[RMDB]
RNA sequence: GGGAACGACUCGAGUAGAGUCGAAAACAAGGCAGAGGGAGGAGCGAAGUUCAAGGAUUAUUUCGACUAUGAGGAGGCGCUGGCCGGGAUUCCUUCGCACCGCGCCCUGGCCCUGCUGCGCGGGCGCCUAAAAAUACACUUUCGAGUGUAUUUUUAGAAAAGAAACAACAACAACAAC
Reactivity to DMS in 0.01 (KOAc 150mM, MgCl2 10mM, bicine 150mM(pH8.5), 24C), signal-to-noise 6, nucleotides 027 to 126: c080a100a110g010g010c040a050g010a110g010g000g010a200g010g010a080g010c040g010a060a060g010u010u000c110a070a090g000g010a080u000u010a090u000u000u000c040g010a060c050u000a070u010g010a120g010g000a080g010g010c060g010c060u000g010g010c030c030g010g010g000a120u000u010c030c020u000u010c080g010c050a080c060c070g010c050g010c020c080c040u000g000g000c030c020c060u000g000c070u000g000c040g020c100g010g000g020c070g010c230
Reactivity to 2A3 in 0.01 (KOAc 150mM, MgCl2 10mM, bicine 150mM(pH8.5), 24C), signal-to-noise 2, nucleotides 027 to 126: c020a030a080g050g000c030a000g020a040g070g000g010a030g000g000a070g040c010g030a050a010g030u110u100c060a060a070g060g020a070u090u060a080u060u250u070c030g030a040c040u030a080u240g040a030g090g030a030g050g020c030g000c070u040g050g000c010c000g040g020g000a000u080u060c000c000u010u010c030g010c040a090c050c020g000c010g010c020c020c000u040g050g010c000c000c010u040g040c000u050g000c070g030c050g010g040g000c030g000c000
This 177-nucleotide RNA was probed chemically with DMS and 2A3. For 2A3, 3,754 sequencing reads were counted. Values cover nucleotides 27 to 126. The reactions ran in a buffer of 150 mM KOAc, 10 mM MgCl2 and 150 mM bicine (pH 8.5), at 24 C. For 2A3 the reverse transcriptase was SuperScript II with manganese. Source: RMDB library OK2TST, as collected in RNAgym.